[RMDB]
Chemical mapping of a 177-nucleotide RNA with DMS and 2A3. Reactivities are given for positions 27 through 126. The reactions ran in a buffer of 150 mM KOAc, 10 mM MgCl2 and 150 mM bicine (pH 8.5), at 24 C.
RNA sequence: GGGAACGACUCGAGUAGAGUCGAAAACGUUCUCAGUUCGGAUUGUAGGCUGCAACUCGCCUACAUGAAGCUGGAAUCGCUAGUAAUCGCGGAUCAGCAUGCCGCGGUGAAUACGUUCCCGGGCCUUUCCCGAAGUAAAUUUCGAUUUACUUCGGGAAAAAGAAACAACAACAACAAC
Reactivity to DMS in 0.01 (KOAc 150mM, MgCl2 10mM, bicine 150mM(pH8.5), 24C), signal-to-noise 3, nucleotides 027 to 126: c090g020u000u010c000u030c000a010g010u020u030c040g000g000a100u000u010g030u000a010g010g020c040u010g010c210a180a090c250u010c250g020c010c000u030a000c010a010u020g000a300a100g010c010u000g010g000a010a000u010c060g010c070u010a020g030u020a090a010u010c010g010c000g000g000a020u020c180a130g020c300a060u050g020c000c000g010c010g000g000u010g000a180a160u000a100c090g000u000u000c000c000c020g000g000g010c170c030u000u030
Reactivity to 2A3 in 0.01 (KOAc 150mM, MgCl2 10mM, bicine 150mM(pH8.5), 24C), signal-to-noise 6, nucleotides 027 to 126: c010g010u000u000c230u010c020a010g050u160u240c010g020g000a020u000u010g000u000a000g000g000c020u080g060c100a090a100c050u070c150g000c000c000u000a000c000a000u010g000a010a010g020c000u010g000g020a040a010u130c020g010c070u030a000g010u020a010a010u010c000g000c010g000g010a030u100c140a090g200c070a090u300g020c010c000g000c000g010g000u010g000a010a020u140a060c040g010u010u000c000c000c000g020g040g010c000c020u000u030